Chemical mapping of a 177-nucleotide RNA with 2A3. The 2A3 profile rests on 651 reads.

[RMDB]
RNA sequence: GGGAACGACUCGAGUAGAGUCGAAAACGUCCAUUAGGUGAUCAUUACUCUGAGAUAAUGCUCAGAAAUAACGGUAAUAUGUGCUGGACUUAAGACACUUAUAUUUAUUCACUUUGUAAUGUCACUACCUAAUCAGUCCCUUCGGGGACUGAUUAGGAAAAGAAACAACAACAACAAC
Reactivity to 2A3 in 0.01 (KOAc 150mM, MgCl2 10mM, bicine 150mM(pH8.5), 24C), signal-to-noise 1, nucleotides 027 to 126: c020g080u000c030c010a110u030u180a090g000g000u020g050a020u140c030a010u000u000a030c020u000c000u070g000a020g010a040u150a280a200u300g060c000u000c000a000g040a020a130a000u110a080a060c030g000g010u020a040a040u030a040u100g020u040g030c030u070g000g090a280c040u160u110a060a000g080a050c030a000c010u100u080a040u010a020u090u100u010a100u080u130c030a070c130u080u080u100g010u030a020a000u030g020u000c000a000c040u030a070